[RMDB]
RNA sequence: GGGAACGACUCGAGUAGAGUCGAAAAAAGGCUGGAUCAGGCGGGCCAGCCGCAAAGCAGGUCCCUAGAGCGCAAAGGGCAGCUGGAGGCGCACAGCGGCCCAAGGUAGCAGCAGCAGGCAAGCAGCCAACGACUCAUAUUUCGAUAUGAGUCGUUGAAAAGAAACAACAACAACAAC
Reactivity to DMS in 0.01 (KOAc 150mM, MgCl2 10mM, bicine 150mM(pH8.5), 24C), signal-to-noise 3, nucleotides 027 to 126: a070a080g000g010c010u000g000g000a070u000c100a110g010g020c020g020g020g020c030c020a040g010c000c010g020c180a050a050a100g010c080a110g000g010u000c000c010c020u010a110g010a090g000c050g030c070a060a100a140g000g000g020c020a020g020c030u000g000g000a140g010g000c030g000c030a130c010a030g000c010g000g010c010c010c010a060a030g010g010u010a070g010c020a050g000c030a060g000c030a030g010g000c060a090a070g010c080a070g030c090
Reactivity to 2A3 in 0.01 (KOAc 150mM, MgCl2 10mM, bicine 150mM(pH8.5), 24C), signal-to-noise 1, nucleotides 027 to 126: a000a010g050g010c010u020g000g010a060u080c040a060g080g040c050g090g010g010c000c010a010g000c030c000g000c000a060a060a020g000c040a030g050g020u040c000c000c000u100a100g040a030g050c050g000c010a100a080a020g010g000g020c010a000g000c000u010g000g060a100g060g030c040g030c020a020c030a040g010c000g010g010c000c000c000a020a010g030g000u070a010g000c010a000g000c000a000g020c030a010g050g000c010a030a020g010c000a000g050c040